This 177-nucleotide RNA was probed chemically with 2A3 and DMS. Conditions: 150 mM KOAc, 10 mM MgCl2 and 150 mM bicine (pH 8.5), 24 C. Values cover nucleotides 27 to 126. Source: RMDB library OK2TST, as collected in RNAgym. High DMS reactivity at an A or C suggests that its Watson-Crick edge is free.

RNA sequence: GGGAACGACUCGAGUAGAGUCGAAAACAUGGCUGUGCUCGGCGUCCACGCCGACGGCGUCGAUGGCGCGGUCCACGCCGAUCCCGGCGGUCAGCCAGCGCAGGGCCUGGACCGGAUCCUCGCGCUAGCAUUUAGGUGCGUUCGCGCACCUAAAUGCAAAAGAAACAACAACAACAAC
Reactivity to 2A3 in 0.01 (KOAc 150mM, MgCl2 10mM, bicine 150mM(pH8.5), 24C), signal-to-noise 1, nucleotides 027 to 126: c060a110u180g010g000c020u050g030u070g120c020u010c030g000g000c020g060u060c100c000a150c060g020c020c000g050a070c030g040g010c010g050u080c010g070a140u170g070g000c010g010c030g020g000u000c010c000a000c000g000c000c030g040a140u140c020c040c000g010g000c020g030g050u080c040a020g010c060c000a020g000c010g000c040a030g010g040g000c040c010u040g030g090a030c020c040g000g020a050u040c020c020u040c060g000c010g000c020u000a020
Reactivity to DMS in 0.01 (KOAc 150mM, MgCl2 10mM, bicine 150mM(pH8.5), 24C), signal-to-noise 2, nucleotides 027 to 126: c120a180u000g010g010c000u000g040u000g010c100u000c030g010g010c020g030u000c070c120a110c100g000c020c030g000a080c080g030g040c090g010u000c120g030a100u010g030g000c120g010c030g010g010u000c030c050a040c050g010c010c010g010a110u010c140c030c020g000g000c040g010g040u000c080a130g010c010c020a070g010c070g000c020a070g020g000g000c030c030u010g000g010a040c070c020g020g000a070u020c010c000u000c090g020c020g000c020u000a150